RNA sequence: GGGAACGACUCGAGUAGAGUCGAAAAAUUGAUGAAUAAGAGCUACUUACCUGCUUUUAUGAUCCAAUCUGUGUGCAGAAAUAAAGAACUCAUAAUUGUUGGAUUCUUGAUCUUGAUAAUUUUUGGACCAUCAUUGUUCAUUCGUGAACAAUGAUGGAAAAGAAACAACAACAACAAC
Reactivity to DMS in 0.01 (KOAc 150mM, MgCl2 10mM, bicine 150mM(pH8.5), 24C), signal-to-noise 2, nucleotides 027 to 126: a060u000u010g000a090u000g000a230a040u000a020a020g010a010g020c010u000a050c200u020u010a160c230c130u000g000c020u010u000u020u000a010u000g000a140u010c050c040a040a020u000c090u010g020u000g000u010g010c080a040g000a050a030a100u010a100a080a050g000a040a040c050u000c030a030u000a090a150u010u020g010u000u000g000g010a050u000u010c050u000u000g000a040u000c030u000u010g020a080u020a060a080u000u000u000u000u000g000g010a300
Reactivity to 2A3 in 0.01 (KOAc 150mM, MgCl2 10mM, bicine 150mM(pH8.5), 24C), signal-to-noise 1, nucleotides 027 to 126: a000u110u040g020a060u020g020a120a080u020a100a010g000a000g060c060u090a070c090u190u080a070c000c030u000g030c000u080u000u020u010a020u030g030a010u000c000c000a020a040u020c010u010g100u000g040u030g160c000a010g110a190a060a040u210a070a140a030g050a030a020c010u010c080a040u030a250a140u140u120g010u090u000g030g010a050u000u050c010u010u050g020a040u000c000u080u080g020a050u120a270a140u080u010u020u110u060g030g000a030